[RMDB]
RNA sequence: GGGAACGACUCGAGUAGAGUCGAAAACCUGGAGGGGCCAGGCAAAGACAUACACCUGACUGGAUGCUUCCUCUUAUUCUAGGGUUGUAUGGUGACAUUUAUCCCAGUUGGGAAGCUACUCUGGAAGAGGCAAGAUGCAGUUCGCUGCAUCUUGCCUAAAAGAAACAACAACAACAAC
Reactivity to DMS in 0.01 (KOAc 150mM, MgCl2 10mM, bicine 150mM(pH8.5), 24C), signal-to-noise 1, nucleotides 027 to 126: c000c020u000g000g040a070g010g000g010g010c110c040a020g050g020c050a070a150a110g000a080c170a060u000a160c070a000c070c080u020g000a100c140u000g000g010a050u020g010c100u010u000c010c020u000c080u000u000a120u000u030c020u000a130g000g000g010u010u010g010u000a050u010g000g020u010g030a100c080a020u000u000u000a080u000c000c010c010a120g010u000u030g000g000g000a030a110g000c040u010a040c020u000c010u000g040g020a080a070g000